[RMDB]
RNA sequence: GGGAACGACUCGAGUAGAGUCGAAAAAUACUUCAUACGUACCUGAGAAUAACGAAGAGCAUAAAGACGUUAGUGAAGAACGUAAAAGAUUAUGGGGUACAGAGUAUCAAGAAGGUGAAACACAUAACCCAAAUGCUAAAGUGUUUAAUCAAGAUACGUAUACAAAGUAGUUCGCUACUUUGUAUACAAAAGAAACAACAACAACAAC
Reactivity to DMS in 0.01 (KOAc 150mM, MgCl2 10mM, bicine 150mM(pH8.5), 24C), signal-to-noise 5, nucleotides 027 to 156: a070u000a030c010u000u010c020a130u000a110c080g020u000a060c020c020u010g010a210g020a160a070u010a090a090c090g010a090a120g010a160g020c080a100u000a050a090a160g010a080c020g000u000u000a090g010u000g020a090a090g020a060a040c000g030u000a060a080a060a120g020a110u000u000a070u000g010g010g030g030u000a080c040a100g010a120g030u000a040u000c050a070a160g000a040a070g020g010u000g020a080a030a050c020a010c020a090u010a080a070c010c020c030a060a060a080u010g010c020u010a050a070a120g000u000g000u000u000u000a080a070u000c050a040a130g000a120u010a040c130
Reactivity to 2A3 in 0.01 (KOAc 150mM, MgCl2 10mM, bicine 150mM(pH8.5), 24C), signal-to-noise 9, nucleotides 027 to 156: a000u070a020c010u030u060c020a040u040a130c050g020u010a020c000c010u040g050a050g050a190a090u150a120a020c100g060a090a050g020a030g090c060a060u090a120a090a020g080a020c010g010u010u050a050g050u110g190a080a070g030a070a010c000g010u050a050a100a020a050g050a020u080u090a040u160g040g000g010g000u010a010c010a010g040a010g000u030a030u080c060a070a050g050a040a030g130g020u100g030a020a020a000c030a000c010a050u100a090a090c010c000c020a050a070a030u140g010c060u120a110a050a040g020u020g030u030u050u060a060a070u070c030a040a000g020a070u080a080c090
Structure probing data (DMS and 2A3) for a 207-nucleotide construct. The data come from the RNA Mapping Database (RMDB), library OK3TST. The reactions ran in a buffer of 150 mM KOAc, 10 mM MgCl2 and 150 mM bicine (pH 8.5), at 24 C. DMS adducts were read by reverse transcription with MarathonRT.